[RMDB]
RNA sequence: GGGAACGACUCGAGUAGAGUCGAAAAGAUAUGGAACCUUCAGAAGGGAGCGUGUCGGAAACGACCACGCGUUGAUCUUCUGAGAGGUUCCUAAGUCAAAAGUAGGUCGUGUUCGCACGACCUACAACUUACUGUUUGUCUUCGGACAAACAGUAAGAAAAGAAACAACAACAACAAC
Reactivity to 2A3 in 0.01 (KOAc 150mM, MgCl2 10mM, bicine 150mM(pH8.5), 24C), signal-to-noise 1, nucleotides 027 to 126: g010a010u070a040u150g000g020a000a000c000c000u020u050c000a000g000a010a010g000g010g000a030g010c000g000u000g010u000c000g000g040a070a080a070c030g000a020c180c070a030c030g020c000g010u050u000g000a020u010c000u000u020c010u010g020a090g030a020g010g000u000u000c010c000u000a010a010g000u020c040a060a030a070a150g010u000a000g000g000u000c000g010u040g060u050u080c280g050c090a000c000g000a010c010c000u000a000c010a000a000
Reactivity to DMS in 0.01 (KOAc 150mM, MgCl2 10mM, bicine 150mM(pH8.5), 24C), signal-to-noise 3, nucleotides 027 to 126: g010a050u000a300u000g000g010a020a000c000c010u000u000c010a010g000a010a020g000g000g000a000g040c000g010u000g010u000c010g000g000a120a120a240c000g010a010c210c070a010c010g010c000g020u000u000g000a030u000c000u000u000c000u000g010a030g000a020g010g010u010u000c000c000u000a010a070g000u000c030a100a120a070a140g010u000a010g010g010u000c000g050u000g000u000u010c240g010c040a020c000g000a010c000c010u000a000c000a040a060